Record summary: This 177-nucleotide RNA was probed chemically with DMS and 2A3.
RNA sequence: GGGAACGACUCGAGUAGAGUCGAAAAGAUAUGGAUCAACCACAGGACAUGAAACGGUUCGGAAACGAACCCGGUUUCAACAGCCUGGGUUGAUCCUAAGUCAAACAUUGUGCUUCGGCACAAUGAAGUGGUAACAAUACUUCGGUAUUGUUACCACAAAAGAAACAACAACAACAAC
Reactivity to DMS in 0.01 (KOAc 150mM, MgCl2 10mM, bicine 150mM(pH8.5), 24C), signal-to-noise 3, nucleotides 027 to 126: g000a040u000a300u000g000g000a010u010c000a000a000c020c010a110c010a020g000g000a080c110a230u000g000a000a000a020c020g010g000u000u000c000g020g000a090a090a110c010g000a010a000c050c020c300g030g020u000u000u000c010a040a060c120a150g000c000c010u000g010g000g030u000u000g000a000u000c000c000u000a010a040g010u000c070a240a120a300c000a000u010u000g010u000g010c000u000u020c220g030g000c000a010c000a020a000u000g000a110a080
Reactivity to 2A3 in 0.01 (KOAc 150mM, MgCl2 10mM, bicine 150mM(pH8.5), 24C), signal-to-noise 2, nucleotides 027 to 126: g020a010u050a020u100g000g000a000u000c000a010a000c040c050a300c040a300g000g030a070c120a300u230g000a020a000a000c010g020g000u000u000c000g010g030a040a010a030c010g010a000a010c040c020c000g210g000u000u020u000c090a170a110c120a130g270c010c000u010g000g010g000u000u010g000a000u000c000c000u000a010a000g000u010c020a000a030a120c010a000u010u010g000u000g000c000u040u080c300g200g000c000a000c000a010a000u010g000a180a020
For DMS, 2,685 sequencing reads were counted. It was measured as part of the RMDB library TTRDES. Values cover nucleotides 27 to 126.